The data come from the RNA Mapping Database (RMDB), library TTRDEL. This 177-nucleotide RNA was probed chemically with 2A3 and DMS. The 2A3 profile rests on 7,388 reads. Conditions: 150 mM KOAc, 10 mM MgCl2 and 150 mM bicine (pH 8.5), 24 C.
RNA sequence: GGGAACGACUCGAGUAGAGUCGAAAAGAUAUGGACCGAGAGCAACAGCCACUGUUUCGGAAACGAAAUGUGGACAUGCUCGGCGUCCUAAGUCAAAGCUCUAUAGGAGUUCGCUCCUAUAGAGCAACAUCGAUCCAUAGUUCGCUAUGGAUCGAUGAAAAGAAACAACAACAACAAC
Reactivity to 2A3 in 0.01 (KOAc 150mM, MgCl2 10mM, bicine 150mM(pH8.5), 24C), signal-to-noise 3, nucleotides 027 to 126: g020a010u030a010u090g000g000a000c020c040g050a050g010a010g220c030a030a220c080a230g040c010c000a000c060u150g100u040u010u000c010g000g000a050a010a020c010g010a010a010a010u030g000u020g020g090a200c050a150u050g000c000u000c000g010g090c150g010u010c000c010u010a040a010g010u000c020a090a170a000g000c000u000c000u010a000u000a010g010g000a020g020u080u090c240g110c100u000c000c000u020a000u000a000g000a010g020c010a000a000
Reactivity to DMS in 0.01 (KOAc 150mM, MgCl2 10mM, bicine 150mM(pH8.5), 24C), signal-to-noise 4, nucleotides 027 to 126: g010a020u000a220u010g010g010a010c010c020g010a260g010a020g030c000a070a100c300a130g000c000c000a010c000u000g030u000u000u000c010g000g000a070a040a090c000g000a000a010a020u010g020u000g000g000a080c110a120u000g020c000u010c000g000g070c230g010u010c000c000u000a040a100g000u000c040a080a110a090g000c000u010c000u000a000u000a010g000g010a030g020u000u010c240g000c000u000c000c000u000a000u000a000g000a010g010c000a020a030